[RMDB]
RNA sequence: GGGAACGACUCGAGUAGAGUCGAAAAGUACCGCCCGCAGCUGAGCAUCCAACAGGAUUCGGUGCGCGAGUCGGGACCUGUUCGUAACCAGUACUGGGUUACCGACAGCGCGGUGCUGUCGGCGACAGGGGGUGUAUGCAUUCGUGCAUACACCCCCAAAAGAAACAACAACAACAAC
Reactivity to 2A3 in 0.01 (KOAc 150mM, MgCl2 10mM, bicine 150mM(pH8.5), 24C), signal-to-noise 2, nucleotides 027 to 126: g040u040a020c000c020g010c000c030c000g000c000a000g000c000u000g060a010g080c030a010u000c010c000a000a180c010a300g000g020a070u070u030c030g140g020u070g020c000g000c000g000a050g000u050c000g010g000g000a000c000c000u050g090u090u050c020g100u150a090a100c120c020a080g020u100a060c100u160g060g010g000u030u050a300c000c000g000a000c000a010g000c010g070c060g010g000u150g000c020u000g050u020c030g000g010c020g000a020c040a060
Reactivity to DMS in 0.01 (KOAc 150mM, MgCl2 10mM, bicine 150mM(pH8.5), 24C), signal-to-noise 1, nucleotides 027 to 126: g000u000a050c120c000g080c000c040c020g000c000a120g000c000u000g000a110g040c070a050u000c000c000a240a140c220a190g000g000a060u050u000c000g000g000u010g000c010g000c000g030a150g000u000c000g000g030g000a110c000c000u000g000u000u000c110g010u000a140a110c130c050a120g000u030a000c050u000g010g020g020u000u000a070c000c000g000a100c060a050g000c000g030c020g000g020u000g050c000u010g000u000c300g050g000c030g000a060c000a210
Chemical mapping of a 177-nucleotide RNA with 2A3 and DMS. For 2A3, 1,094 sequencing reads were counted. Source: RMDB library OK1LIB, as collected in RNAgym. The RNA was probed in 150 mM KOAc, 10 mM MgCl2 and 150 mM bicine (pH 8.5) at 24 C. Values cover nucleotides 27 to 126.